[RMDB]
RNA sequence: GGGAACGACUCGAGUAGAGUCGAAAAGGAUCCUCUCACAGGAUUGUCUCUGUGUUGCGAAACUCCAACAGUAUUGCUUCGUGACACCUACAGCAAUACUGUAGGUAUAGAGAGUAGGAGAGGAUCGGCUGAUGAUGCGAUUCGUCGCAUCAUCAGCAAAAGAAACAACAACAACAAC
Reactivity to 2A3 in 0.01 (KOAc 150mM, MgCl2 10mM, bicine 150mM(pH8.5), 24C), signal-to-noise 1, nucleotides 027 to 126: g110g000a000u040c030c000u000c010u010c000a250c040a050g210g120a240u120u300g170u000c020u060c000u000g030u000g020u110u030g030c020g050a040a020a000c030u060c050c010a030a010c020a060g070u090a040u060u070g020c000u110u100c060g000u030g050a060c020a060c010c020u050a000c000a010g050c000a040a080u070a160c010u020g000u000a020g000g000u060a020u120a050g020a010g020a000g050u090a060g000g060a000g000a000g000g000a000u000c000g020
Reactivity to DMS in 0.01 (KOAc 150mM, MgCl2 10mM, bicine 150mM(pH8.5), 24C), signal-to-noise 2, nucleotides 027 to 126: g020g000a000u000c000c000u000c000u000c010a270c160a220g010g000a120u010u000g020u000c000u000c000u000g000u000g010u010u010g010c200g000a100a020a050c060u000c050c010a110a050c100a070g000u000a140u000u000g000c040u000u000c230g010u000g000a090c240a100c220c100u000a020c010a020g000c050a060a050u000a180c000u000g000u000a080g000g000u000a050u000a010g000a030g000a070g020u000a190g000g000a000g000a000g010g000a000u000c000g000
The data come from the RNA Mapping Database (RMDB), library OK2TRN. The record gives the reactivity of an RNA of 177 nucleotides to 2A3 and DMS. DMS adducts were read by reverse transcription with MarathonRT. The reactions ran in a buffer of 150 mM KOAc, 10 mM MgCl2 and 150 mM bicine (pH 8.5), at 24 C. For 2A3, 1,382 sequencing reads were counted. For DMS, 1,221 sequencing reads were counted.